[RMDB]
The record gives the reactivity of an RNA of 177 nucleotides to DMS and 2A3. For DMS the reverse transcriptase was MarathonRT. For 2A3 the reverse transcriptase was SuperScript II with manganese. Source: RMDB library OK2TST, as collected in RNAgym. Conditions: 150 mM KOAc, 10 mM MgCl2 and 150 mM bicine (pH 8.5), 24 C.
RNA sequence: GGGAACGACUCGAGUAGAGUCGAAAACAUUGCAUCCACUUGCACUUGCGGCAAAAGUAGGAGGCCUGUGAGUCAAGACCGCUCCAGAGGCGUAAUCUUCCUUACAUAUGACAACUGCGGCCUUAUAACAUGGAACGUGUUUCGACACGUUCCAUGUAAAAGAAACAACAACAACAAC
Reactivity to DMS in 0.01 (KOAc 150mM, MgCl2 10mM, bicine 150mM(pH8.5), 24C), signal-to-noise 2, nucleotides 027 to 126: c100a070u000u020g010c050a080u000c010c040a150c060u010u020g000c060a040c070u000u000g010c070g000g000c060a010a050a070a110g000u010a040g030g000a100g000g010c010c090u010g010u000g010a050g000u000c100a040a050g000a100c150c030g000c010u000c030c190a090g040a170g020g000c000g010u010a080a140u000c040u000u000c020c020u010u010a030c110a110u000a090u020g000a040c130a030a040c080u000g020c040g000g030c040c030u000u000a080u000a080
Reactivity to 2A3 in 0.01 (KOAc 150mM, MgCl2 10mM, bicine 150mM(pH8.5), 24C), signal-to-noise 2, nucleotides 027 to 126: c050a030u040u170g000c020a060u050c000c000a060c020u040u070g020c020a020c040u080u160g030c140g020g010c010a000a000a030a150g080u110a090g040g060a020g000g090c010c000u080g020u040g040a000g060u050c020a010a010g020a080c040c010g000c010u000c000c040a040g000a060g100g050c020g020u060a030a050u010c020u030u020c010c010u020u030a020c010a040u180a060u250g090a030c020a040a020c060u050g010c000g000g070c010c000u070u130a120u020a050